[RMDB]
RNA sequence: GGGAACGACUCGAGUAGAGUCGAAAAUCGCCGUGUGGCUAGCGGAGAACGGCUACGUCAUGGGCACCAGCAGUGGCGCCAUCGCCGAGGUUCAUGCGGGCGUGCUCGCCGGCAUCACCGGCCGUGCCUCUUGUGAUAGCUUCGGCUAUCACAAGAGAAAAGAAACAACAACAACAAC
Reactivity to 2A3 in 0.01 (KOAc 150mM, MgCl2 10mM, bicine 150mM(pH8.5), 24C), signal-to-noise 3, nucleotides 027 to 126: u090c000g000c030c010g100u110g000u020g130g000c010u010a010g010c050g090g100a030g020a080a020c020g140g000c080u140a170c050g130u160c030a020u030g050g040g000c050a060c080c030a060g090c060a050g070u080g110g020c040g040c120c060a150u240c030g000c010c010g040a080g020g020u060u090c010a000u070g000c010g030g000g000c020g020u040g000c020u030c030g010c020c020g040g000c020a080u160c020a020c010c010g030g000c040c010g050u080g050c010
Reactivity to DMS in 0.01 (KOAc 150mM, MgCl2 10mM, bicine 150mM(pH8.5), 24C), signal-to-noise 3, nucleotides 027 to 126: u000c130g000c000c010g000u010g040u000g010g000c040u000a050g030c030g020g000a060g020a100a060c050g010g030c020u000a060c090g000u020c030a040u010g000g010g010c020a090c040c050a070g030c130a120g020u000g010g020c100g010c120c100a090u000c090g010c020c000g000a110g010g010u010u000c030a040u010g000c030g000g000g000c020g040u000g000c070u000c030g020c010c000g000g000c020a060u020c080a060c010c000g000g000c020c120g020u010g000c100

An RNA of 177 nucleotides, treated with 2A3 and DMS and read out base by base.
The 2A3 profile rests on 3,592 reads.
For DMS, 3,561 sequencing reads were counted.
It was measured as part of the RMDB library OK2TRN.
DMS adducts were read by reverse transcription with MarathonRT.
The reactions ran in a buffer of 150 mM KOAc, 10 mM MgCl2 and 150 mM bicine (pH 8.5), at 24 C.